[RMDB]
RNA sequence: GGGAACGACUCGAGUAGAGUCGAAAAUACCGCGUCUUCGGACGCGGUAAGAUCCCGUCGGAAAACCUGAGAGACGGUGAUGAAGAGACUCAAGCUACGCAAUGACUGCCGGAUUCGUCCGGCAGAAGAUAGGGGGAUCAUUCGUGAUCCCCCUAUCAAAAGAAACAACAACAACAAC
Reactivity to DMS in 0.01 (KOAc 150mM, MgCl2 10mM, bicine 150mM(pH8.5), 24C), signal-to-noise 2, nucleotides 027 to 126: u000a010c000c000g060c000g000u020c040u000u020c260g010g000a050c010g030c000g010g030u000a000a030g000a130u000c000c000c000g030u030c060g000g010a100a040a080a090c040c020u010g010a130g000a150g030a090c110g000g010u000g020a020u000g020a190a090g010a160g010a010c040u020c060a080a090g020c040u010a030c130g030c140a090a080u000g000a210c020u000g000c000c000g000g000a010u010u010c180g010u000c000c000g000g020c010a000g000a040a060